Notes
An RNA of 207 nucleotides, treated with 2A3 and read out base by base. Source: RMDB library VIROID, as collected in RNAgym. The RNA was probed in 150 mM KOAc, 10 mM MgCl2 and 150 mM bicine (pH 8.5) at 24 C.

RNA sequence: GGGAACGACUCGAGUAGAGUCGAAAAUUUCUGUAAAGAGGAGACUGCUGGACCCGCCGCCCAAGUUCGAGCAUGAGCCAAGUUCCGAGCGAGGAGAUCGCGAGGGGCAGGAACAGCUCCCGAGAGGGGAUAAAUGGUAAAGAAGCAUUGGAACGUCACUAUAUUGUGUGUUCGCACACAAUAUAGUAAAAGAAACAACAACAACAAC
Reactivity to 2A3 in 0.01 (KOAc 150mM, MgCl2 10mM, bicine 150mM(pH8.5), 24C), signal-to-noise 2, nucleotides 027 to 156: u000u030u000c040u030g140u120a110a050a020g080a080g030g000a020g030a060c040u020g040c030u050g020g010a060c010c080c050g100c070c050g000c020c040c010a050a030g030u050u070c070g010a020g020c050a110u140g040a010g060c020c080a050a040g020u080u000c020c010g010a020g010c000g000a010g040g060a150g040a070u040c030g020c000g040a050g020g000g010g000c000a010g020g020a030a020c000a040g000c000u030c020c020c020g110a100g030a010g000g070g040g010a020u110a050a180a100u130g030g020u040a010a050a030g040a050a010g040c010a040u040u110g020g030a040a050c060g040u050c080